[RMDB]
RNA sequence: GGGAACGACUCGAGUAGAGUCGAAAAAGCCUGACGCAGCAACGCCGCGUGGAGGAUGACACUUUUCGGAGCGUAAACUCCUUUUCUUAGGGAAGAAUUCUGACGGUACCUAAGGAAUAAGCACCGGCCAUUUCAGCGUUUUCGAACGCUGAAAUGGAAAAGAAACAACAACAACAAC
Reactivity to 2A3 in 0.01 (KOAc 150mM, MgCl2 10mM, bicine 150mM(pH8.5), 24C), signal-to-noise 3, nucleotides 027 to 126: a010g050c000c020u020g030a010c020g000c050a090g040c030a110a100c120g050c020c030g060c040g020u050g010g090a020g030g000a040u270g010a000c010a010c060u040u080u090u100c110g100g000a000g000c050g040u050a010a020a110c000u000c000c000u000u000u010u000c000u000u000a000g020g020g030a070a100g040a110a160u150u100c080u160g070a070c010g060g000u030a040c000c000u020a000a010g030g020a000a000u110a040a010g040c000a030c020c000g040g000
Reactivity to DMS in 0.01 (KOAc 150mM, MgCl2 10mM, bicine 150mM(pH8.5), 24C), signal-to-noise 2, nucleotides 027 to 126: a080g090c040c000u010g000a160c000g050c060a030g030c070a150a090c100g000c000c000g010c080g050u000g010g000a060g000g000a030u030g000a050c250a030c050u020u010u000u030c090g010g000a050g010c070g130u000a070a100a140c020u010c010c030u000u000u000u000c010u000u000a010g000g000g000a260a100g000a110a120u070u020c130u070g070a250c040g020g000u060a150c000c000u050a050a000g000g000a000a000u000a160a010g030c070a090c030c070g020g020